[RMDB]
RNA sequence: GGGAACGACUCGAGUAGAGUCGAAAACGCAAAGCUGCAGCGCGGCGCUCUGGAGGCCUUGCCCGGCGCACUGCUCUUUACAUGGCCCGACGUGAGGGCACUUCGCGGGCAGUGCUGCGGCCUCGUGAAACUGCCCCUAAGUUCGCUUAGGGGCAAAGUAAGAGAGGAUGUUCGCAUCCUCUCUUACAAAAGAAACAACAACAACAAC
Reactivity to 2A3 in 0.01 (KOAc 150mM, MgCl2 10mM, bicine 150mM(pH8.5), 24C), signal-to-noise 2, nucleotides 027 to 156: c060g000c020a050a040a030g020c010u080g020c040a060g090c020g010c010g170g000c040g000c020u070c040u140g110g010a040g000g070c050c000u130u170g040c000c000c000g080g000c020g000c010a030c020u040g010c000u020c030u090u190u120a080c050a120u110g070g030c030c010c000g040a030c070g140u100g050a130g010g040g030c050a060c040u040u060c080g010c100g020g030g010c010a000g030u010g060c000u030g000c010g020g000c000c010u020c010g000u000g010a090a070a000c060u020g000c010c000c000c000u010a000a000g020u030u090c090g020c150u000u000a000g000g000g000g010c000a000a000a000
Structure probing data (2A3) for a 207-nucleotide construct. 2A3 adducts were read by reverse transcription with SuperScript II with manganese. It was measured as part of the RMDB library M2RFOK.